RNA sequence: GGGAACGACUCGAGUAGAGUCGAAAAGAAAGAAAGAAAUUCCUGACACGAGAUAGUGACAUAGCUGAGAUAGGUUUCAUUUCACACUAACUUAUCCCAGCUAUGUCACUGACUAAUGUCAGAUUAACCCUACAGCAUGGUUCGCCAUGCUGUAGGGAAAAGAAACAACAACAACAAC
Reactivity to DMS in 0.01 (KOAc 150mM, MgCl2 10mM, bicine 150mM(pH8.5), 24C), signal-to-noise 4, nucleotides 027 to 126: g030a100a090a120g000a040a050a060g000a050a100a140u000u020c070c000u000g010a030c010a020c300g000a020g000a070u000a000g000u010g020a000c000a000u010a010g020c000u000g000a030g010a000u000a010g000g000u000u010u010c200a050u020u020u040c290a130c300a100c220u020a020a010c000u000u000a010u000c000c000c000a000g000c000u000a010u010g000u000c000a000c000u000g000a040c000u000a040a020u000g000u000c000a020g020a040u020u030a030a090
Reactivity to 2A3 in 0.01 (KOAc 150mM, MgCl2 10mM, bicine 150mM(pH8.5), 24C), signal-to-noise 4, nucleotides 027 to 126: g160a010a040a000g170a040a080a000g090a010a160a020u110u080c000c000u000g000a000c000a000c040g040a020g020a060u040a040g020u000g000a000c000a000u000a000g000c000u010g010a000g000a000u000a000g020g060u030u070u120c110a190u110u270u290c180a140c000a010c150u110a010a000c000u000u000a000u000c000c000c020a000g010c000u000a000u010g000u000c000a000c000u000g000a000c000u000a040a000u020g000u000c000a000g000a020u040u080a080a080